The record gives the reactivity of an RNA of 177 nucleotides to DMS and 2A3. 2A3 adducts were read by reverse transcription with SuperScript II with manganese. The 2A3 profile rests on 1,512 reads. Values cover nucleotides 27 to 126. Conditions: 150 mM KOAc, 10 mM MgCl2 and 150 mM bicine (pH 8.5), 24 C.

RNA sequence: GGGAACGACUCGAGUAGAGUCGAAAAUCUUUGAUGCAAUCUUGUGGAGGCAGAUAUAUUAGUGUUGAUUAGGUUGGACUCUUUGGAUUAGGCUGUUUUCAUGGAGAUGUGACCCACUCAACUGUGGAUACCAAGGGAGAUUCGUCUCCCUUGGUAUAAAAGAAACAACAACAACAAC
Reactivity to DMS in 0.01 (KOAc 150mM, MgCl2 10mM, bicine 150mM(pH8.5), 24C), signal-to-noise 5, nucleotides 027 to 126: u000c030u010u010u010g030a100u000g010c050a060a070u000c040u000u000g020u000g000g010a080g000g010c050a030g010a080u000a090u010a070u010u010a060g030u000g010u000u000g010a070u000u010a090g020g010u000u000g010g000a070c040u000c020u000u010u000g010g010a070u010u000a080g020g020c050u010g000u000u000u000u010c020a030u000g010g010a040g010a080u000g010u000g000a100c070c010c010a050c090u000c080a060a090c100u000g010u010g010g010
Reactivity to 2A3 in 0.01 (KOAc 150mM, MgCl2 10mM, bicine 150mM(pH8.5), 24C), signal-to-noise 2, nucleotides 027 to 126: u040c030u040u040u160g080a070u130g040c020a060a130u030c020u040u080g000u040g070g010a040g020g000c020a010g060a050u060a020u040a000u050u150a070g100u040g070u090u050g050a060u000u070a070g070g100u030u060g070g000a040c000u000c000u050u080u060g070g000a030u080u030a070g120g000c030u010g040u060u020u010u030c040a020u020g080g030a030g020a020u100g040u070g090a010c000c040c020a010c030u000c000a010a150c090u060g000u010g130g030